[RMDB]
RNA sequence: GGGAACGACUCGAGUAGAGUCGAAAAUCUACAUAGUUCGCUAUGUAGAAAAACGCGCACGCGCGCGCACGCGGUCACUCUCGCACACGCACGCGCACGCAAAAACGUUGCGGUUCGCCGCAACGAACGUGUAUACUCGCUUCGGCGAGUAUACACGAAAAGAAACAACAACAACAAC
Reactivity to 2A3 in 0.01 (KOAc 150mM, MgCl2 10mM, bicine 150mM(pH8.5), 24C), signal-to-noise 1, nucleotides 027 to 126: u000c000u010a000c000a000u000a010g020u040u070c210g050c110u010a000u010g000u020a010g010a000a010a000a000a000c080g020c000g000c010a020c060g010c000g000c000g000c000g000c020a010c090g040c010g040g000u120c070a080c190u160c000u090c040g000c010a030c010a010c100g010c000a010c030g000c010g000c010a000c020g010c030a020a020a000a000a080c010g020u030u010g000c020g000g120u040u040c270g020c050c010g000c010a000a000c020g010a040a010
Reactivity to DMS in 0.01 (KOAc 150mM, MgCl2 10mM, bicine 150mM(pH8.5), 24C), signal-to-noise 1, nucleotides 027 to 126: u000c000u000a000c000a000u000a000g000u000u030c250g000c000u000a010u020g000u000a000g000a000a040a030a060a150c190g020c020g040c080a080c030g010c000g020c000g020c000g000c020a140c120g000c000g020g010u000c210a090c280u010c070u000c030g030c000a150c180a050c010g010c000a050c000g000c060g000c050a040c070g000c040a010a050a020a010a140c030g000u000u000g000c000g030g020u000u020c110g010c010c010g030c000a000a000c010g010a000a110
Conditions: 150 mM KOAc, 10 mM MgCl2 and 150 mM bicine (pH 8.5), 24 C. The record gives the reactivity of an RNA of 177 nucleotides to 2A3 and DMS. It was measured as part of the RMDB library M2PK50. Reactivities are given for positions 27 through 126.